[RMDB]
Source: RMDB library M2PK50, as collected in RNAgym.
An RNA of 177 nucleotides, treated with 2A3 and DMS and read out base by base.
Values cover nucleotides 27 to 126.
For 2A3, 24,738 sequencing reads were counted.
Reactivities are rounded to 0.1 and cut off at 0 and 3.
DMS adducts were read by reverse transcription with MarathonRT.
The reactions ran in a buffer of 150 mM KOAc, 10 mM MgCl2 and 150 mM bicine (pH 8.5), at 24 C.
RNA sequence: GGGAACGACUCGAGUAGAGUCGAAAACGAGAUGAGUUCGCUCAUCUCGAAAGAACCGCGGGCGUGACUCGGUCAGUGCAUGACAGGCGCUGCGGUCACGAAAAAGUGGUGUGUUCGCACACCACAACUGUAUUAGGUUGUUCGCAACCUAAUACAGAAAAGAAACAACAACAACAAC
Reactivity to 2A3 in 0.01 (KOAc 150mM, MgCl2 10mM, bicine 150mM(pH8.5), 24C), signal-to-noise 7, nucleotides 027 to 126: c000g000a000g000a010u010g000a000g050u050u130c200g070c170u000c010a010u000c000u000c000g000a000a020a010g030a060a030c010c010g000c070g070g040g030c010g000u020g030a030c050u110c260g110g040u100c040a000g020u020g070c040a060u150g130a120c060a100g160g010c010g000c000u000g010c000g000g000u010c000a000c000g090a040a060a000a010a010g010u000g000g000u000g000u000g000u000u060c220g020c060a000c000a000c000c010a000c000a010a030
Reactivity to DMS in 0.01 (KOAc 150mM, MgCl2 10mM, bicine 150mM(pH8.5), 24C), signal-to-noise 7, nucleotides 027 to 126: c010g010a010g000a000u000g010a020g020u000u010c230g010c000u000c000a010u000c000u000c000g000a020a050a090g010a160a150c000c010g030c120g000g000g010c000g020u000g000a030c030u010c070g030g010u010c000a010g010u000g020c030a070u010g020a110c290a120g010g000c000g000c000u000g010c010g000g010u000c010a010c040g000a040a050a050a090a080g010u000g000g010u000g020u000g010u000u010c200g010c000a010c000a010c000c000a010c010a030a060